[RMDB]
Conditions: 150 mM KOAc, 10 mM MgCl2 and 150 mM bicine (pH 8.5), 24 C.
Chemical mapping of a 177-nucleotide RNA with 2A3 and DMS.
DMS adducts were read by reverse transcription with MarathonRT.

RNA sequence: GGGAACGACUCGAGUAGAGUCGAAAAGAUAUGGAUCCAGCUUUUGACGCUUGACACUCGGAAACGAGUGGAGAGCGAUAAGCUGAUCCUAAGUCAAAACCCAAGGCAACUUCGGUUGCCUUGGGAAUCAUAUACCUUUCUUCGGAAAGGUAUAUGAAAAAGAAACAACAACAACAAC
Reactivity to 2A3 in 0.01 (KOAc 150mM, MgCl2 10mM, bicine 150mM(pH8.5), 24C), signal-to-noise 5, nucleotides 027 to 126: g020a020u060a020u130g010g000a010u070c220c060a020g000c020u100u110u150u190g250a130c080g000c010u010u030g010a020c000a000c000u010c000g000g040a060a090a050c000g010a000g000u000g000g000a020g000a000g000c010g010a010u010a010a000g000c000u000g000a000u000c000c000u000a100a020g040u020c020a020a040a080a280c000c010c000a000a000g010g000c010a000a000c010u070u180c300g150g000u020u000g000c010c020u010u000g000g000g000a010a000
Reactivity to DMS in 0.01 (KOAc 150mM, MgCl2 10mM, bicine 150mM(pH8.5), 24C), signal-to-noise 7, nucleotides 027 to 126: g010a030u010a300u000g000g010a010u000c130c070a010g000c000u000u000u010u010g010a200c050g010c000u000u000g000a300c000a000c000u000c000g000g000a100a100a170c000g010a010g000u000g000g000a300g000a000g000c000g010a030u000a010a010g010c000u000g010a040u000c000c000u000a030a110g000u000c020a110a060a100a140c020c000c000a000a010g010g000c000a010a000c000u000u020c150g020g010u000u000g000c000c000u000u000g000g000g000a000a010

The 2A3 profile rests on 16,762 reads.